Structure probing data (DMS) for a 177-nucleotide construct.
RNA sequence: GGGAACGACUCGAGUAGAGUCGAAAACUCGCAGGGUUCGCCCUGCGAGAAAGGCCGAGGUUGUUGCUCGGUUGAAAACUACAACCCUUGGAAACAAGGGAAAAACCCUUACCUUCGGGUAAGGGAACGUAACACUUACCUUCGGGUAAGUGUUACGAAAAGAAACAACAACAACAAC
Reactivity to DMS in 0.01 (KOAc 150mM, MgCl2 10mM, bicine 150mM(pH8.5), 24C), signal-to-noise 1, nucleotides 027 to 126: c000u000c000g070c000a030g000g010g000u000u000c300g020c010c010c000u000g000c040g000a030g000a010a070a150g000g000c000c010g010a030g000g000u000u000g000u010u010g030c020u000c010g010g010u000u030g000a070a090a040a110c100u000a090c200a150a150c010c010c010u010u000g010g010a130a140a100c010a040a020g000g000g000a000a020a060a120a050c010c000c000u000u010a000c010c000u000u020c210g040g020g000u000a000a000g010g000g000a020a000